[RMDB]
RNA sequence: GGGAACGACUCGAGUAGAGUCGAAAAAGGACGUCCUCCCUGUCUCCUCGGUUCUUCUUCGAUCCGGACCGGCUCAUCUCGGCAAAGGGCGGCAGUCCUCAGUACUCUUACUCUUUCCUAUAAAGAGACGCCAUGACCUUCGGGUCAUGGAAAAGAAACAACAACAACAAC
Reactivity to DMS in 0.01 (KOAc 150mM, MgCl2 10mM, bicine 150mM(pH8.5), 24C), signal-to-noise 3, nucleotides 027 to 129: a020g000g000a000c000g030u000c030c000u030c000c000c000u020g040u030c050u020c000c000u020c000g000g000u040u010c070u000u000c040u040u060c100g050a090u040c040c050g020g010a110c060c020g050g000c060u000c060a100u030c060u040c000g010g030c110a070a140a090g010g030g050c070g070g000c070a090g000u040c010c040u000c000a000g040u020a000c040u040c030u080u010a130c020u030c090u000u000u000c070c080u060a100u060a080a100a010g040a020g010a150c040g030
Reactivity to 2A3 in 0.01 (KOAc 150mM, MgCl2 10mM, bicine 150mM(pH8.5), 24C), signal-to-noise 8, nucleotides 027 to 129: a010g010g000a010c010g080u070c000c000u020c010c000c000u010g030u010c050u040c030c010u030c010g010g000u030u010c010u210u010c000u080u140c110g080a090u050c040c020g020g020a030c010c010g020g000c030u020c040a160u030c070u040c040g030g000c050a090a080a090g010g000g000c010g010g000c020a050g000u000c000c000u010c000a010g010u090a090c020u000c000u060u050a090c010u030c000u030u030u020c010c030u060a080u160a150a070a010g060a010g040a030c060g020